[RMDB]
RNA sequence: GGGAACGACUCGAGUAGAGUCGAAAACACACCGCGACGCCUUCUGCCCCGGUCUGCUUGCCGAUAUCAAGCGUCCCGAGCAAUACGUCGCGAUCACCGACGAGGAAGUCGCCGCGCGGGUAACACACUAUGGUGGCUAUUUCGAUAGCCACCAUAGAAAAGAAACAACAACAACAAC
Reactivity to 2A3 in 0.01 (KOAc 150mM, MgCl2 10mM, bicine 150mM(pH8.5), 24C), signal-to-noise 5, nucleotides 027 to 126: c090a000c000a020c020c010g000c010g030a040c010g020c010c030u020u030c050u090g020c010c000c020c000g020g000u010c050u210g000c000u010u020g040c060c070g200a110u090a070u300c020a030a000g000c000g000u010c020c000c020g000a010g020c030a060a080u130a210c010g010u010c010g020c030g020a010u060c040a050c020c010g040a040c010g010a040g100g020a010a020g040u050c010g000c050c020g010c020g000c030g020g000g030u070a090a030c050a010c000a010
Reactivity to DMS in 0.01 (KOAc 150mM, MgCl2 10mM, bicine 150mM(pH8.5), 24C), signal-to-noise 4, nucleotides 027 to 126: c070a100c200a140c090c010g020c040g000a060c030g000c060c030u000u000c040u000g000c000c020c050c280g060g030u030c060u050g030c000u000u000g010c120c100g010a200u070a110u050c010a020a020g000c030g010u020c050c000c040g000a150g010c040a100a100u000a120c030g000u000c030g000c060g000a050u050c160a090c230c000g000a050c030g000a200g000g000a050a030g000u010c010g010c040c020g010c030g000c070g000g000g000u010a030a050c110a070c230a200
Chemical mapping of a 177-nucleotide RNA with 2A3 and DMS. Source: RMDB library OK1LIB, as collected in RNAgym. Conditions: 150 mM KOAc, 10 mM MgCl2 and 150 mM bicine (pH 8.5), 24 C. The DMS profile rests on 4,804 reads.